Chemical mapping of a 177-nucleotide RNA with 2A3 and DMS.

[RMDB]
RNA sequence: GGGAACGACUCGAGUAGAGUCGAAAAGAUAUGGAUCCAGUCAACAGCGUAUGUGUCGGAAACGACACUACGACAUGACUGAUCCUAAGUCAAAACUGCUACGGUUAGUUCGCUAACCGUAGCAGAAGACGUGUCGUUAGUUCGCUAACGACACGUCAAAAGAAACAACAACAACAAC
Reactivity to 2A3 in 0.01 (KOAc 150mM, MgCl2 10mM, bicine 150mM(pH8.5), 24C), signal-to-noise 2, nucleotides 027 to 126: g020a010u010a000u080g000g000a010u040c300c100a030g000u010c010a010a100c040a300g240c000g010u060a090u300g010u090g000u010c000g020g000a020a040a050c000g000a000c000a000c010u000a000c010g120a210c030a050u040g000a000c010u010g010a000u000c000c000u000a040a010g020u000c020a000a010a120a200c000u000g020c000u000a000c010g000g010u000u020a010g000u040u070c270g000c200u000a000a000c000c010g000u010a000g000c000a000g000a000a010
Reactivity to DMS in 0.01 (KOAc 150mM, MgCl2 10mM, bicine 150mM(pH8.5), 24C), signal-to-noise 2, nucleotides 027 to 126: g010a020u000a300u000g000g010a000u010c130c120a010g020u010c000a000a170c300a150g020c010g030u000a000u010g050u010g000u010c000g000g000a050a020a090c010g020a030c000a020c000u000a010c000g020a090c150a180u000g000a020c010u000g010a030u000c000c000u010a020a080g000u010c030a100a080a140a170c000u000g010c000u000a000c000g000g000u000u000a010g010u010u010c220g020c000u010a000a020c000c000g010u000a000g000c000a000g000a020a070
For DMS, 1,321 sequencing reads were counted. DMS adducts were read by reverse transcription with MarathonRT. Reactivities are given for positions 27 through 126.